Chemical mapping of a 207-nucleotide RNA with DMS and 2A3. The DMS profile rests on 3,144 reads. The reactions ran in a buffer of 150 mM KOAc, 10 mM MgCl2 and 150 mM bicine (pH 8.5), at 24 C. Reactivities are given for positions 27 through 156. For DMS the reverse transcriptase was MarathonRT.
[RMDB]
RNA sequence: GGGAACGACUCGAGUAGAGUCGAAAAGGCCAAGCUCGCCGGCACUGAGAUGCCGCGCAAGUCCUACCUGUACAAGAUCAAGGACGGGGACGCUCGCGUCCUCAUCGUGGUCCCGGACGGGCAGGUCACGGAAACGGGCGAGGUGUCGUUCGUCAAGACAUACUAAGACGUUCGCGUCUUAGUAUGUAAAAGAAACAACAACAACAAC
Reactivity to DMS in 0.01 (KOAc 150mM, MgCl2 10mM, bicine 150mM(pH8.5), 24C), signal-to-noise 1, nucleotides 027 to 156: g060g010c030c030a060a290g000c020u000c000g030c020c000g040g000c020a090c010u000g000a150g020a240u000g000c000c010g020c090g070c060a080a090g010u000c020c000u000a060c000c000u000g020u010a090c030a060a030g000a040u010c060a160a070g050g020a040c020g010g010g000g030a040c020g010c060u040c230g030c000g050u000c000c000u000c030a020u000c030g020u000g010g000u000c000c010c050g000g030a040c010g000g010g010c030a070g000g010u030c130a030c070g010g000a070a060a060c070g030g000g010c010g000a230g020g000u010g000u000c010g010u020u000c030g030u000c020a070a190g030
Reactivity to 2A3 in 0.01 (KOAc 150mM, MgCl2 10mM, bicine 150mM(pH8.5), 24C), signal-to-noise 3, nucleotides 027 to 156: g030g010c000c010a060a020g010c020u030c010g030c000c000g000g050c010a020c050u100g050a070g050a300u060g010c020c000g020c040g010c050a000a040g020u000c010c010u020a060c010c010u040g010u090a080c060a120a070g000a110u080c030a080a040g140g000a030c050g020g000g010g010a000c000g020c080u120c100g040c040g000u010c010c020u020c010a020u010c020g020u050g000g000u030c000c000c060g110g040a130c030g000g000g010c010a020g020g000u010c060a020c100g080g020a080a040a010c030g000g000g000c000g010a030g000g020u080g050u030c010g020u010u040c020g050u020c030a020a020g050